The data come from the RNA Mapping Database (RMDB), library M2PK50.
This 177-nucleotide RNA was probed chemically with DMS and 2A3.
DMS adducts were read by reverse transcription with MarathonRT.

RNA sequence: GGGAACGACUCGAGUAGAGUCGAAAACACAUUCUAUUCGUAGAAUGUGGAACGUAGAGAGAUCGACAGCGUCGCAGCUAUGUGGAACGAGGAAGAGCGCGCAGGGAUCGGGCUUCGGCCCGAUCAACGGAGAAGAAUCUUUCGAGAUUCUUCUCCGAAAAGAAACAACAACAACAAC
Reactivity to DMS in 0.01 (KOAc 150mM, MgCl2 10mM, bicine 150mM(pH8.5), 24C), signal-to-noise 4, nucleotides 027 to 126: c010a000c000a000u000u010c000u000a010u000u020c150g020u000a000g010a010a010u010g010u000g000g010a090a060c100g000u000a060g000a120g000a090g010a060u000c060g000a070c090a080g010c070g010u000c050g010c080a070g010c040u000a020u000g020u010g010g020a070a120c090g000a070g010g010a050a080g010a060g010c050g010c060g010c100a090g010g000g000a010u000c000g010g010g000c000u000u010c210g030g030c000c010c000g000a000u000c020a040a110
Reactivity to 2A3 in 0.01 (KOAc 150mM, MgCl2 10mM, bicine 150mM(pH8.5), 24C), signal-to-noise 3, nucleotides 027 to 126: c010a010c000a010u010u000c010u030a050u060u070c150g070u020a010g000a030a000u000g000u010g010g020a060a020c040g080u170a000g030a000g000a000g000a180u040c040g060a050c050a080g000c000g080u130c040g040c050a060g010c000u100a050u160g060u090g040g090a140a060c050g020a060g010g010a060a010g030a020g060c020g000c010g000c050a030g160g060g000a000u000c000g010g000g010c010u070u050c200g110g010c030c010c020g000a000u000c000a000a020
Conditions: 150 mM KOAc, 10 mM MgCl2 and 150 mM bicine (pH 8.5), 24 C.
The 2A3 profile rests on 3,552 reads.